[RMDB]
Chemical mapping of a 177-nucleotide RNA with 2A3 and DMS. DMS adducts were read by reverse transcription with MarathonRT. It was measured as part of the RMDB library OK1LIB.
RNA sequence: GGGAACGACUCGAGUAGAGUCGAAAAAAGGUCAUAUUGAUAAUGGUGAGCUUCAUAAGGCAAAUGAAGUUGGGUAUUUAUUGUAUCGUCCAACUGAAAAUACAACGUUUGAGCAACGUGCUGCAACGUAAUCAAGUGACUUCGGUCACUUGAUUACAAAAGAAACAACAACAACAAC
Reactivity to 2A3 in 0.01 (KOAc 150mM, MgCl2 10mM, bicine 150mM(pH8.5), 24C), signal-to-noise 6, nucleotides 027 to 126: a000a000g030g010u060c030a020u040a070u100u180g100a040u050a130a050u140g160g020u090g060a030g000c010u030u030c040a030u060a180a070g160g000c080a140a060a080u100g020a040a000g000u010u030g040g020g020u060a120u050u150u030a110u040u090g090u050a030u050c110g010u000c020c020a020a030c030u060g090a010a050a050a000u250a050c100a090a010c040g010u010u040u100g060a030g020c020a040a060c060g040u040g030c030u050g020c020a040a020c120
Reactivity to DMS in 0.01 (KOAc 150mM, MgCl2 10mM, bicine 150mM(pH8.5), 24C), signal-to-noise 3, nucleotides 027 to 126: a050a030g000g000u000c040a020u010a050u010u030g010a070u010a030a030u030g020g030u030g020a040g000c050u000u010c050a030u020a050a090g000g020c140a080a050a060u000g000a020a020g000u000u000g000g000g010u010a050u030u010u020a080u010u040g030u020a020u010c180g000u020c010c000a020a090c130u000g010a110a050a030a090u030a080c140a090a010c030g010u000u000u030g030a120g000c120a090a020c050g020u010g000c100u000g010c120a050a050c100